Source information: This 177-nucleotide RNA was probed chemically with DMS and 2A3. Reactivities are given for positions 27 through 126. Reactivities are rounded to 0.1 and cut off at 0 and 3. It was measured as part of the RMDB libraries RFM100 and RFMREP.
RNA sequence: GGGAACGACUCGAGUAGAGUCGAAAAUGAGCCAUUGUUCAGGCCGGCUAAUGCUGCGCAUACCGCGCUGGUGUUUGUCACAGAGCAGUGCUCUCAGACCUGCUACUGUACCCUUUUAAUUUUUCCUUGUUAGCAAAGUAUUCGUACUUUGCUAACAAAAAGAAACAACAACAACAAC
Reactivity to DMS in 0.01 (KOAc 150mM, MgCl2 10mM, bicine 150mM(pH8.5), 24C), signal-to-noise 3, nucleotides 027 to 126: u020g010a090g000c300c040a060u010u010g010u010u010c100a110g000g010c080c060g000g000c040u000a020a040u000g020c010u000g020c020g060c020a140u010a140c230c140g020c030g000c030u010g020g000u000g010u000u020u000g000u010c070a060c040a040g020a060g000c010a040g000u010g020c080u000c080u020c120a110g000a120c050c010u010g000c010u010a080c020u000g040u000a100c040c020c010u000u000u000u010a040a120u000u010u000u010u020c050c080u010
Reactivity to 2A3 in 0.01 (KOAc 150mM, MgCl2 10mM, bicine 150mM(pH8.5), 24C), signal-to-noise 8, nucleotides 027 to 126: u110g010a010g020c020c000a060u050u120g060u090u090c100a060g020g080c050c030g000g000c010u040a030a020u050g000c030u030g000c010g000c020a050u130a300c090c090g000c010g010c070u080g030g010u020g020u010u020u050g030u020c030a000c010a050g010a010g010c020a020g020u040g100c020u020c010u010c060a060g030a120c010c010u020g020c020u060a160c000u070g020u070a060c000c000c000u020u050u040u110a190a240u090u100u010u030u020c010c000u010